RNA sequence: GGGAACGACUCGAGUAGAGUCGAAAAAAGUGGGAGCGACGCGUAAUGAGGAGGAUGUGAUUCUGAGGUUCAAUUCUCAUUGGCUCUCGUGGAGAACGCGCCCUCCGUUGGCUGUUGCUCUGGUAAAGUAGACUCAGCGAAGGCUAAAUCUACUUUAGUUUUACAGAUGGUUCGCCAUCUGUAAAACAAAAGAAACAACAACAACAAC
Reactivity to DMS in 0.01 (KOAc 150mM, MgCl2 10mM, bicine 150mM(pH8.5), 24C), signal-to-noise 2, nucleotides 027 to 156: a050a040g010u010g050g030g000a090g020c000g030a040c040g060c020g000u040a100a070u020g000a100g020g020a060g010g010a070u000g030u000g000a150u000u000c060u000g020a060g030g010u000u000c030a030a050u000u000c090u000c110a100u000u000g010g000c020u000c010u000c030g010u000g040g000a110g000a090a060c050g020c040g020c010c020c000u000c010c010g000u010u000g000g010c060u000g000u000u000g010c000u000c030u000g010g010u000a010a030a020g010u000a010g000a020c010u000c030a010g010c000g020a260a150g010g000c010u000a020a030a030u010c000u010a010c010u000u010u000a040
Reactivity to 2A3 in 0.01 (KOAc 150mM, MgCl2 10mM, bicine 150mM(pH8.5), 24C), signal-to-noise 4, nucleotides 027 to 156: a020a000g170u180g020g020g010a010g010c010g010a010c020g020c030g060u090a050a100u110g100a070g060g010a010g010g010a020u040g080u030g110a300u070u000c030u060g050a010g000g050u070u080c000a010a020u190u070c090u080c160a030u020u030g020g000c010u010c000u000c090g070u100g090g130a090g010a040a010c000g000c000g010c040c000c000u000c000c000g000u020u030g030g010c100u080g010u010u000g000c010u000c000u000g000g010u030a010a010a000g000u000a000g010a010c010u020c180a000g010c050g110a150a070g110g000c020u040a020a040a000u000c000u000a000c000u010u000u010a020
Record summary: An RNA of 207 nucleotides, treated with DMS and 2A3 and read out base by base. It was measured as part of the RMDB library ARCHII. Values are in units of 0.01, from 0 to 300, in steps of 10. For 2A3 the reverse transcriptase was SuperScript II with manganese.